[RMDB]
RNA sequence: GGGAACGACUCGAGUAGAGUCGAAAACCACUUUGUGGCUGGCGUUGCUGAGUGGGAAAAUCAAACCGCACCAAGUGUAUUGGCAUAUUUGGGGCGCAGAUUUAUACGAAGAUGCCAAGAGCUUGAAAAAGGUAUGGUAAUUCGUUACCAUACCUUUAAAAGAAACAACAACAACAAC
Reactivity to 2A3 in 0.01 (KOAc 150mM, MgCl2 10mM, bicine 150mM(pH8.5), 24C), signal-to-noise 2, nucleotides 027 to 126: c020c000a000c010u070u070u070g050u050g000g000c000u040g020g090c060g080u050u050g030c030u010g020a010g020u040g010g000g060a050a070a000a050u100c040a050a030a030c010c030g000c020a020c040c000a040a020g000u010g020u060a120u050u040g010g000c010a020u020a060u040u040u020g020g000g000g000c040g000c020a010g030a080u130u210u140a180u030a040c020g020a030a000g040a030u010g010c020c000a000a010g040a010g040c010u000u010g110a090a060
Reactivity to DMS in 0.01 (KOAc 150mM, MgCl2 10mM, bicine 150mM(pH8.5), 24C), signal-to-noise 8, nucleotides 027 to 126: c010c010a080c080u000u000u000g020u000g010g020c020u000g030g000c160g020u000u000g010c030u000g010a080g040u000g010g010g010a060a070a070a050u010c130a060a080a130c190c030g000c080a090c100c010a020a020g020u000g010u000a270u000u000g010g000c030a020u000a040u000u000u000g000g000g010g010c050g010c090a110g000a100u010u000u000a090u000a130c090g000a060a070g000a050u000g000c000c010a020a040g000a250g000c020u000u000g000a040a070
This 177-nucleotide RNA was probed chemically with 2A3 and DMS.
DMS adducts were read by reverse transcription with MarathonRT.
Conditions: 150 mM KOAc, 10 mM MgCl2 and 150 mM bicine (pH 8.5), 24 C.
It was measured as part of the RMDB library OK2TST.
2A3 adducts were read by reverse transcription with SuperScript II with manganese.